[RMDB]
RNA sequence: GGGAACGACUCGAGUAGAGUCGAAAAUGUGAUUUCGAUCACAAGUUAACCUUUGUGGAUGUGGGAGCUCCAUAGGUGGUUGGCCCAUUGGGCCAACGUAACAUCCUAUGCGAGCGAAGAACACAUCCACUCUGGUCUCAGGAGACUUCGGUCUCAACACCUUACUUACUUUCGAGUAAGUAAGGUGAAAAGAAACAACAACAACAAC
Reactivity to 2A3 in 0.01 (KOAc 150mM, MgCl2 10mM, bicine 150mM(pH8.5), 24C), signal-to-noise 7, nucleotides 027 to 156: u040g000u000g020a020u100u150u180c270g100a040u010c010a000c000a020a050g070u070u250a070a060c010c000u020u000u000g000u000g000g010a010u000g000u000g010g000g020a010g010c010u000c000c000a000u000a000g010g000u010g010g010u000u010g010g020c030c070c220a300u090u300g010g000g000c000c010a000a000c000g000u000a010a020c020a170u130c000c000u000a000u010g140c250g000a000g000c000g000a020a000g010a010a010c000a000c000a000u000c000c000a000c000u000c000u000g010g040u000c020u040c070a120g080g020a000g000a000c000u050u140c280g080g000u000c010u000c000a010a030
Reactivity to DMS in 0.01 (KOAc 150mM, MgCl2 10mM, bicine 150mM(pH8.5), 24C), signal-to-noise 2, nucleotides 027 to 156: u000g020u010g000a030u010u010u000c270g040a040u010c000a020c030a060a160g020u000u020a100a070c010c010u010u000u000g030u010g000g020a030u000g020u000g000g000g010a300g000c010u000c000c000a020u000a010g000g040u010g040g000u000u000g010g000c020c010c020a300u010u010g080g040g010c010c000a000a000c000g020u000a000a010c100a130u010c000c000u000a010u000g000c170g010a020g010c000g000a020a060g010a150a180c010a000c020a030u000c000c010a000c000u000c000u010g000g020u000c030u020c110a210g020g010a090g010a070c020u000u010c170g070g020u000c010u000c010a040a230
Structure probing data (2A3 and DMS) for a 207-nucleotide construct.
For 2A3 the reverse transcriptase was SuperScript II with manganese.
DMS adducts were read by reverse transcription with MarathonRT.